[RMDB]
RNA sequence: GGGAACGACUCGAGUAGAGUCGAAAACUCUUGCAGAACUUUGAUUUUAACGAACUUAAAUAAAAGCCCUGUUGUUUAGCGUAUCGUUGCACUUGUCUGGUGGGAUUGUGGCAUUAAUUUGCCUGCUGAAGAUCAUGGUUCGCCAUGAUCAAAAGAAACAACAACAACAAC
Reactivity to 2A3 in 0.01 (KOAc 150mM, MgCl2 10mM, bicine 150mM(pH8.5), 24C), signal-to-noise 6, nucleotides 027 to 129: c000u000c000u010u170g000c010a010g000a060a030c010u060u080u080g150a110u140u130u100u190a060a050c090g000a030a020c070u050u110a080a050a020u120a050a070a080a010g020c000c010c010u050g020u100u030g020u030u050u030a070g020c040g020u070a110u160c020g010u070u050g020c060a010c040u050u070g030u060c030u030g040g030u030g050g010g020a060u020u100g120u060g020g000c000a000u020u080a090a030u060u040u040g030c010c020u000g030c010u030g000a090a020
Reactivity to DMS in 0.01 (KOAc 150mM, MgCl2 10mM, bicine 150mM(pH8.5), 24C), signal-to-noise 7, nucleotides 027 to 129: c000u010c040u000u010g060c060a040g010a060a070c140u010u000u000g020a110u050u000u020u050a030a050c160g020a120a170c060u000u000a020a040a050u020a050a030a040a030g040c040c030c020u020g000u010u020g000u010u010u010a080g020c110g040u010a000u020c070g000u000u010g010c070a080c080u030u030g020u030c010u000g000g000u030g030g020g000a110u000u000g040u020g000g000c040a000u000u000a040a090u030u010u010g000c000c000u010g040c030u000g010a100a100
Structure probing data (2A3 and DMS) for a 170-nucleotide construct. For 2A3, 9,016 sequencing reads were counted. It was measured as part of the RMDB library 15KLIB. DMS adducts were read by reverse transcription with MarathonRT.